Chemical mapping of a 177-nucleotide RNA with 2A3 and DMS. Reactivities are given for positions 27 through 126. For DMS, 1,598 sequencing reads were counted. Conditions: 150 mM KOAc, 10 mM MgCl2 and 150 mM bicine (pH 8.5), 24 C. Source: RMDB library RFM100, as collected in RNAgym.
RNA sequence: GGGAACGACUCGAGUAGAGUCGAAAAGCAUGGGAUAGCCUUUCUAAAUGGUUUAUUGGGCAAUUCUAUUUUACCAAGACUAUCGCAACCAUGCAAAAAAGCAACGGCAAAUCCGCUUCUUUUUUGGAUGUCUAAUGUCCUUCGGGACAUUAGACAUAAAAGAAACAACAACAACAAC
Reactivity to 2A3 in 0.01 (KOAc 150mM, MgCl2 10mM, bicine 150mM(pH8.5), 24C), signal-to-noise 3, nucleotides 027 to 126: g000c030a020u010g020g000g100a020u050a000g000c020c000u020u100u100c050u100a030a060a090u050g040g060u070u080u180a120u030u170g040g040g060c060a040a020u100u060c050u100a100u050u090u060u060a000c000c020a020a000g010a010c000u010a000u050c000g030c050a000a030c000c000a000u010g000c000a000a030a000a000a060a140g090c060a070a020c000g040g030c070a000a040a130u140c020c000g020c050u020u010c010u000u050u070u030u050u090g200g030
Reactivity to DMS in 0.01 (KOAc 150mM, MgCl2 10mM, bicine 150mM(pH8.5), 24C), signal-to-noise 1, nucleotides 027 to 126: g020c010a000u030g010g000g000a000u000a050g000c010c000u010u000u020c140u020a000a000a050u020g000g080u000u010u000a150u060u000g030g000g000c170a090a020u000u000c010u010a010u000u010u000u000a030c100c030a000a050g000a040c020u000a020u000c040g030c140a040a300c040c050a020u010g000c070a000a030a040a000a060a010g000c060a050a010c140g020g030c130a070a070a080u010c030c000g000c050u060u060c000u000u000u000u000u080u000g000g000